[RMDB]
RNA sequence: GGGAACGACUCGAGUAGAGUCGAAAAGAUAUGGAGAUGCCUGGGAGCCUAAGGAUCGGAAACGAUCCGAUGGGCAUCGAUCAGGUCAUCUCCUAAGUCAAAACGAGAUCCCUUCGGGGAUCUCGAACAAUAUCUACCGCUUCGGCGGUAGAUAUUGAAAAGAAACAACAACAACAAC
Reactivity to DMS in 0.01 (KOAc 150mM, MgCl2 10mM, bicine 150mM(pH8.5), 24C), signal-to-noise 3, nucleotides 027 to 126: g010a030u010a070u020g000g000a020g020a010u000g020c010c000u000g000g000g000a070g040c010c000u020a200a300g000g000a000u000c000g010g000a010a020a030c000g010a010u000c000c000g000a080u020g020g000g020c010a180u010c260g010a040u000c000a000g000g010u020c020a010u000c000u000c000c000u000a000a060g000u000c030a090a060a130a270c020g000a010g010a000u000c010c000c000u000u010c270g040g010g000g020a000u000c000u000c000g000a050a090
Reactivity to 2A3 in 0.01 (KOAc 150mM, MgCl2 10mM, bicine 150mM(pH8.5), 24C), signal-to-noise 2, nucleotides 027 to 126: g010a000u020a020u050g000g010a010g000a010u020g010c000c010u030g010g020g070a150g000c000c000u040a070a080g000g000a010u010c010g000g000a030a000a000c010g000a010u040c040c000g020a040u120g000g000g000c000a030u280c090g000a090u030c000a000g000g060u220c050a000u000c000u000c010c000u000a010a000g000u000c000a030a020a110a140c030g000a000g000a000u020c000c040c000u030u070c300g010g000g000g020a000u000c000u000c000g000a010a010